[RMDB]
RNA sequence: GGGAACGACUCGAGUAGAGUCGAAAAUGUGCAGCCCAAAUGGAUAUUCAUUCAGGAUCAUCAGACAUAUCUUGAGCUCCUUCGAAGGGGUGUAUUCUGGGAAUAGAAGGAUGAUAGGGCUGGUGAAAAUGAGUCUCUAAUUCGUUAGAGACUCAUUAAAAGAAACAACAACAACAAC
Reactivity to 2A3 in 0.01 (KOAc 150mM, MgCl2 10mM, bicine 150mM(pH8.5), 24C), signal-to-noise 4, nucleotides 027 to 126: u220g050u080g050c010a010g020c020c010c010a050a030a040u060g000g030a050u040a090u190u150c100a040u060u050c020a030g090g030a050u020c020a020u020c000a040g060a100c020a080u160a050u080c010u040u070g020a020g020c010u030c020c010u100u140c140g200a190a050g000g000g010g020u050g040u040a090u110u010c040u060g040g030g000a070a000u060a080g050a080a000g080g030a010u050g010a020u090a080g010g000g010c000u010g000g050u090g040a120a150
Reactivity to DMS in 0.01 (KOAc 150mM, MgCl2 10mM, bicine 150mM(pH8.5), 24C), signal-to-noise 9, nucleotides 027 to 126: u010g020u010g020c040a050g000c000c010c010a080a130a100u000g010g010a130u000a060u010u010c080a060u010u000c030a060g010g010a100u000c030a060u000c020a050g010a170c200a090u000a050u000c050u000u000g010a180g010c050u000c010c000u010u010c260g010a140a120g000g010g010g010u000g020u010a060u000u000c040u000g010g000g000a050a060u000a050g010a130a090g000g000a070u000g000a070u000a110g010g010g020c000u000g010g010u000g010a060a060

Structure probing data (2A3 and DMS) for a 177-nucleotide construct. For DMS the reverse transcriptase was MarathonRT. The data come from the RNA Mapping Database (RMDB), library OK2TRN.